[RMDB]
RNA sequence: GGGAACGACUCGAGUAGAGUCGAAAAUACACAGGGAGUAGGAGUGCCAACAUCUACACUAGGCAGCAAAGCAAAGAAAAUAGGGCCAACUGGGUUGUCGUUCCUUCACUGGGGUAAACACUAACAUCCUUGUCUCUGAUACCCAGGUGACAGGUGACCUGCUCAUAGUGUUCGCACUAUGAGCAGGAAAAGAAACAACAACAACAAC
Reactivity to 2A3 in 0.01 (KOAc 150mM, MgCl2 10mM, bicine 150mM(pH8.5), 24C), signal-to-noise 1, nucleotides 027 to 156: u070a000c020a000c060a000g050g060g000a050g000u060a060g020g060a020g020u070g020c030c020a050a020c010a050u000c120u170a000c020a060c050u020a020g000g000c000a000g120c020a050a050a000g050c070a180a080a000g120a150a050a080a000u270a070g030g040g060c060c030a070a070c070u000g000g110g000u040u050g000u000c000g010u030u020c020c000u000u030c050a030c060u030g040g000g000g000u060a090a210a000c000a080c100u150a170a000c000a010u040c050c050u070u000g000u120c000u000c000u020g030a120u030a130c000c020c000a000g010g030u000g000a030c080a030g000g000u070g030a000

This 207-nucleotide RNA was probed chemically with 2A3. For 2A3, 449 sequencing reads were counted. The RNA was probed in 150 mM KOAc, 10 mM MgCl2 and 150 mM bicine (pH 8.5) at 24 C.